[RMDB]
RNA sequence: GGGAACGACUCGAGUAGAGUCGAAAAAGGGUAGGUGUAAGGUGGCGUUGCACUCCGAGUUUCAGCAUGGAUGGACUCGUUAAAGAAGUCUAUGCAACCUUUAGAUGCAGACGAUUAUUCGUAUGCAAUGGCUGCCUAAUUAGCAAAAGUUAAUUAAGUUUCCGAAAAACUUCGGUUUUUCGGAAACAAAAGAAACAACAACAACAAC
Reactivity to 2A3 in 0.01 (KOAc 150mM, MgCl2 10mM, bicine 150mM(pH8.5), 24C), signal-to-noise 1, nucleotides 027 to 156: a000g030g000g000u030a040g000g040u030g050u030a070a030g010g010u020g010g000c000g010u000u020g040c030a030c030u040c040c020g000a020g010u000u050u160c040a040g010c060a080u110g070g100a070u040g040g000a020c000u000c040g040u060u120a040a020a040g030a030a000g020u000c010u020a030u010g030c080a080a040c020c000u110u210u070a100g010a100u110g000c020a000g000a060c010g000a010u100u000a080u060u290c010g000u020a020u080g030c000a000a030u050g080g010c000u000g000c000c000u070a070a050u140u090a000g000c000a000a080a080a000g000u050u120a040a060u070u040a060a020
Annotation
This 207-nucleotide RNA was probed chemically with 2A3. Reactivities are given for positions 27 through 156. The data come from the RNA Mapping Database (RMDB), library ARCHII. The RNA was probed in 150 mM KOAc, 10 mM MgCl2 and 150 mM bicine (pH 8.5) at 24 C.